Structure probing data (2A3 and DMS) for a 207-nucleotide construct. Conditions: 150 mM KOAc, 10 mM MgCl2 and 150 mM bicine (pH 8.5), 24 C. The 2A3 profile rests on 1,571 reads. Reactivities are given for positions 27 through 156. For 2A3 the reverse transcriptase was SuperScript II with manganese. Source: RMDB library OK3TST, as collected in RNAgym.
RNA sequence: GGGAACGACUCGAGUAGAGUCGAAAAUGGCUGGGUCGACGACAUCGAGGACACCGUCGAAGCGGGGCAACCGACGCGAACAGUGCUGAAAUGCACGAGCUUCCGGGAUCACCCGUCGUUCAUCAGCGUGGCCGCGAACCCGCUCUUGCCCGGGUCGUACUGAAAGACCUUUCGAGGUCUUUCAGUAAAAAGAAACAACAACAACAAC
Reactivity to 2A3 in 0.01 (KOAc 150mM, MgCl2 10mM, bicine 150mM(pH8.5), 24C), signal-to-noise 3, nucleotides 027 to 156: u130g040g000c050u040g010g010g040u060c020g020a030c020g000a030c040a130u170c130g040a100g050g030a040c050a060c100c000g020u020c020g010a030a000g000c010g010g010g030g020c050a000a050c040c060g120a040c010g010c020g020a090a020c040a040g110u040g120c000u020g020a160a120a060u080g020c020a000c020g010a010g010c080u250u170c070c020g110g020g060a300u180c170a280c090c000c010g050u000c010g000u010u030c010a090u020c000a010g020c030g030u040g010g010c050c020g010c010g020a030a070c010c000c010g000c020u020c030u100u190g020c000c010c060g000g010g010u040c010g000
Reactivity to DMS in 0.01 (KOAc 150mM, MgCl2 10mM, bicine 150mM(pH8.5), 24C), signal-to-noise 1, nucleotides 027 to 156: u000g000g030c030u030g010g000g050u000c030g030a080c000g000a100c040a270u000c020g030a160g020g010a130c020a080c050c000g000u000c020g000a090a050g020c030g000g000g000g010c050a090a210c030c040g000a140c080g020c010g000a070a070c110a160g030u020g000c010u000g000a100a080a120u000g010c050a040c030g030a060g000c030u010u000c110c040g010g000g020a090u020c130a070c030c000c050g050u000c080g000u000u000c040a120u010c070a060g030c030g010u000g020g000c000c030g020c040g000a070a120c030c000c030g010c010u000c040u010u000g020c000c000c000g000g020g000u010c120g000